Structure probing data (2A3 and DMS) for a 177-nucleotide construct. The 2A3 profile rests on 4,633 reads. The data come from the RNA Mapping Database (RMDB), library OK2TRN.

[RMDB]
RNA sequence: GGGAACGACUCGAGUAGAGUCGAAAAUCAAGAGUGGAAAAGUGGGUGAUGGGUGAGAGGCAUCUGCAAUAAUGGUGAGAGCAGCAGUUACCACGUAUGUUAUAGGUAAUGAUUAUACGCUGAGCACAGCAUAUACUUCGUUCGCGAAGUAUAUGCUAAAAGAAACAACAACAACAAC
Reactivity to 2A3 in 0.01 (KOAc 150mM, MgCl2 10mM, bicine 150mM(pH8.5), 24C), signal-to-noise 4, nucleotides 027 to 126: u100c030a090a010g070a010g070u140g010g060a060a090a060a040g070u080g010g070g000u060g030a130u090g030g030g040u080g020a090g000a020g010g000c020a020u020c040u060g000c020a020a130u110a130a100u110g040g000u060g040a080g040a020g050c010a010g000c010a000g010u010u020a020c010c020a040c070g080u070a080u170g130u150u110a090u050a150g050g030u060a090a040u060g040a010u080u190a060u080a060c110g010c050u020g020a020g040c030a020c030
Reactivity to DMS in 0.01 (KOAc 150mM, MgCl2 10mM, bicine 150mM(pH8.5), 24C), signal-to-noise 5, nucleotides 027 to 126: u000c080a070a110g010a100g030u020g000g020a080a070a100a100g020u000g010g010g030u000g010a100u000g010g000g010u000g000a080g020a100g000g000c030a040u000c030u010g000c080a080a060u000a060a070u020g010g000u000g000a080g020a070g010c040a050g010c040a140g010u000u000a040c030c040a110c110g010u000a050u010g000u000u000a080u020a080g010g010u010a050a050u000g010a070u000u000a070u000a050c110g000c090u000g000a090g010c110a060c180